[RMDB]
RNA sequence: GGGAACGACUCGAGUAGAGUCGAAAAACCUUUGUGAUUUAGGGAGGUAUGGGAUUGAGGGACAACCCAUUGGGUUGUCCUCCCCACCAAUCUCCAUACCGAAGAACUAAAUCACUCUGGUAAAACCUGAAAUCAUGGUUCGCCAUGAUUUCAGGAAGUUUAAGCGAAUCUUCGGAUUCGCUUAAACAAAAGAAACAACAACAACAAC
Reactivity to 2A3 in 0.01 (KOAc 150mM, MgCl2 10mM, bicine 150mM(pH8.5), 24C), signal-to-noise 2, nucleotides 027 to 156: a000c000c000u000u010u000g010u000g000a000u000u000u010a020g010g010g000a020g010g010u000a000u010g020g000g010a000u000u000g010a060g000g010g000a000c000a000a000c010c020c080a120u110u300g000g000g000u010u000g010u000c000c000u020c020c000c000c000a020c000c010a000a000u010c100u040c010c000a000u000a000c000c000g020a080a020g000a000a000c010u000a010a000a000u000c000a000c000u010c000u000g000g030u060a080a070a040a090c000c000u000g000a000a000a000u000c000a000u000g030g010u040u070c220g040c040c000a000u000g000a000u000u000u000c000a000g010g000a020a000
Reactivity to DMS in 0.01 (KOAc 150mM, MgCl2 10mM, bicine 150mM(pH8.5), 24C), signal-to-noise 1, nucleotides 027 to 156: a000c000c000u020u000u030g020u020g010a050u000u000u000a000g000g040g000a230g020g050u000a000u000g000g020g000a040u000u020g000a300g060g000g010a010c000a000a040c000c000c000a290u020u000g020g010g000u010u000g020u010c010c020u010c140c110c050c100a300c050c010a070a010u000c000u060c040c050a020u000a000c030c000g020a150a160g000a160a300c000u000a000a010a050u000c000a020c010u000c050u010g020g030u000a030a040a150a200c010c000u000g010a000a040a020u000c000a000u010g000g020u010u000c300g060c040c000a020u000g000a020u010u000u000c020a020g010g010a010a030
Structure probing data (2A3 and DMS) for a 207-nucleotide construct. For 2A3, 3,445 sequencing reads were counted. Conditions: 150 mM KOAc, 10 mM MgCl2 and 150 mM bicine (pH 8.5), 24 C. For DMS the reverse transcriptase was MarathonRT.